[RMDB]
RNA sequence: GGGAACGACUCGAGUAGAGUCGAAAAGUGUCGGACUCGCAAGUGCGAAUAUAUUUUAUCCCUAAACAGGGAGUGGAAAGCACGUCCUGCAGUGGAAAACACGUCCAUCCCAAAGCGAGAAAUGAAACUAUAAAGCAACGUUCGCGUUGCUUUAUAGAAAAGAAACAACAACAACAAC
Reactivity to 2A3 in 0.01 (KOAc 150mM, MgCl2 10mM, bicine 150mM(pH8.5), 24C), signal-to-noise 3, nucleotides 027 to 126: g060u040g030u080c020g020g030a040c010u020c020g000c030a060a040g010u010g010c020g100a200a000u120a000u000a040u040u100u110u110a080u050c000c000c000u110a250a240a050c080a070g010g010g000a010g000u050g070g080a100a040a020g050c000a000c000g020u030c020c000u030g000c010a030g040u100g000g020a040a040a030a010c110a030c050g030u000c010c000a040u000c010c000c000a020a010a000g030c040g030a020g090a060a010a040u210g030a070a070a040
Reactivity to DMS in 0.01 (KOAc 150mM, MgCl2 10mM, bicine 150mM(pH8.5), 24C), signal-to-noise 4, nucleotides 027 to 126: g010u010g030u010c210g010g000a110c020u000c020g030c020a160a200g010u000g000c000g000a100a080u000a080u000a090u000u020u000u000a140u000c000c000c000u000a060a100a120c210a050g010g010g000a030g000u010g010g010a110a080a170g010c000a000c010g000u000c010c030u000g000c040a080g040u010g000g000a030a030a100a060c160a050c140g010u010c030c060a070u000c010c000c000a070a070a100g030c040g000a030g010a100a060a090u000g000a080a120a170